[RMDB]
RNA sequence: GGGAACGACUCGAGUAGAGUCGAAAACGCUGAAGUGACGGUGAUGGCGGGGCCCAUGCUUUCCGCGAAGGCCUUGCACUCGUUCAGGACUUUCUCUAUCUCCUCGCGCGAAUCUGGGCCAUUGUUCCACGUGACGGACAUGGACAGGGUUACAUUGUAAAGUCCUUAAUUUCGAUUAAGGACUUUAAAAAGAAACAACAACAACAAC
Reactivity to DMS in 0.01 (KOAc 150mM, MgCl2 10mM, bicine 150mM(pH8.5), 24C), signal-to-noise 2, nucleotides 027 to 156: c080g040c050u000g020a100a070g020u020g000a070c100g020g020u000g010a090u020g010g040c060g030g020g040g020c020c010c020a110u000g030c040u000u000u000c110c070g040c020g020a140a090g000g000c010c020u000u000g010c060a050c040u000c070g010u000u010c000a100g000g020a060c040u000u000u000c070u000c060u000a130u000c020u000c010c010u000c030g010c030g040c050g000a060a070u000c020u000g000g010g020c010c010a110u010u010g020u000u000c000c030a090c060g030u020g030a080c090g020g000a090c020a090u010g030g010a060c000a040g000g040g030u000u000a070c060a170u000u000g010
Reactivity to 2A3 in 0.01 (KOAc 150mM, MgCl2 10mM, bicine 150mM(pH8.5), 24C), signal-to-noise 3, nucleotides 027 to 156: c040g040c020u040g040a100a020g070u020g070a080c030g010g120u090g050a180u050g130g010c010g010g040g010g000c000c020c010a020u160g030c030u120u150u140c060c060g000c050g070a070a030g020g000c000c040u040u030g000c020a030c020u090c020g010u100u030c020a040g010g050a020c020u050u100u040c050u040c030u040a140u020c050u000c020c000u020c060g060c000g010c040g070a040a080u030c010u000g040g110g030c020c010a020u020u140g020u080u040c020c010a070c100g040u040g020a010c080g030g000a000c000a020u050g020g010a010c000a030g030g000g010u030u050a050c030a140u070u080g170
Chemical mapping of a 207-nucleotide RNA with DMS and 2A3. The RNA was probed in 150 mM KOAc, 10 mM MgCl2 and 150 mM bicine (pH 8.5) at 24 C. DMS adducts were read by reverse transcription with MarathonRT. Source: RMDB library OK3TST, as collected in RNAgym. The DMS profile rests on 7,449 reads. For 2A3, 1,387 sequencing reads were counted.